[RMDB]
RNA sequence: GGGAACGACUCGAGUAGAGUCGAAAAGGUCAAGGGUAUACGAGUAGCUGCGCUCCCCUGCUAGAACCUCCAAACAAGCUCUCAAGGUCCAUUUGUAGGAGAACGUAGGGUAGUCAAGCUUCCAAGACCUCCGACUUGAAUUCGUUCAAGUCGGAGGAAAAGAAACAACAACAACAAC
Reactivity to 2A3 in 0.01 (KOAc 150mM, MgCl2 10mM, bicine 150mM(pH8.5), 24C), signal-to-noise 3, nucleotides 027 to 126: g140g000u070c070a060a060g080g020g070u180a070u050a170c070g040a050g080u040a020g000c000u000g000c010g020c100u030c010c010c000c000u010g000c000u030a020g050a060a030c000c020u020c020c000a070a060a040c020a040a050g030c020u030c010u060c110a050a100g110g010u010c060c020a060u030u010u050g030u030a030g000g070a100g010a030a000c080g020u000a000g020g000g010u010a000g010u020c040a010a050g010c020u030u000c030c010a040a060g050a040
Reactivity to DMS in 0.01 (KOAc 150mM, MgCl2 10mM, bicine 150mM(pH8.5), 24C), signal-to-noise 2, nucleotides 027 to 126: g000g000u010c010a010a090g000g000g010u000a050u000a030c200g040a150g010u000a090g000c030u000g000c300g010c060u000c070c000c000c000u000g030c010u040a100g000a230a040c090c000u030c050c000a000a080a040c030a100a300g040c030u010c020u040c070a130a300g020g000u000c030c130a300u000u000u000g000u000a160g000g000a000g000a100a120c220g000u000a020g020g010g000u000a010g000u000c080a070a070g020c000u000u050c010c020a070a260g000a090